Chemical mapping of a 177-nucleotide RNA with 2A3 and DMS. Source: RMDB library OK2TRN, as collected in RNAgym. The reactions ran in a buffer of 150 mM KOAc, 10 mM MgCl2 and 150 mM bicine (pH 8.5), at 24 C. The 2A3 profile rests on 1,261 reads.

[RMDB]
RNA sequence: GGGAACGACUCGAGUAGAGUCGAAAACGAUCUGGUACCUCGAUCGCGCGCGCCAUGAUCAGGCCUACGUACCUGAUCUGGCCUGAUCUAGUACGUCGUAGCGCACGGCCGUACGGUACGGCCGCGCCGGCCAACACCGAUUCGUCGGUGUUGGCCGAAAAGAAACAACAACAACAAC
Reactivity to 2A3 in 0.01 (KOAc 150mM, MgCl2 10mM, bicine 150mM(pH8.5), 24C), signal-to-noise 1, nucleotides 027 to 126: c010g000a040u010c040u100g090g050u020a030c030c060u060c060g030a040u040c020g060c000g000c020g000c020g020c140c000a050u180g000a000u000c000a000g000g000c000c040u130a110c090g080u130a040c030c010u060g030a120u030c050u040g000g050c040c000u060g020a000u020c020u020a010g040u020a010c030g000u020c030g020u030a020g050c040g000c060a000c010g040g000c030c020g040u110a060c120g100g200u100a000c010g000g000c000c000g000c000g000c000
Reactivity to DMS in 0.01 (KOAc 150mM, MgCl2 10mM, bicine 150mM(pH8.5), 24C), signal-to-noise 1, nucleotides 027 to 126: c060g030a030u010c130u000g060g030u000a020c020c060u000c160g000a060u010c030g020c230g000c180g010c130g020c000c010a070u000g010a000u000c000a020g010g030c080c000u040a100c300g010u010a110c000c020u000g000a050u020c030u000g000g000c000c040u000g000a010u000c010u000a120g000u000a030c030g010u000c000g030u000a160g090c100g030c010a040c030g020g010c010c060g020u000a120c180g020g010u000a010c030g000g000c010c000g000c010g030c000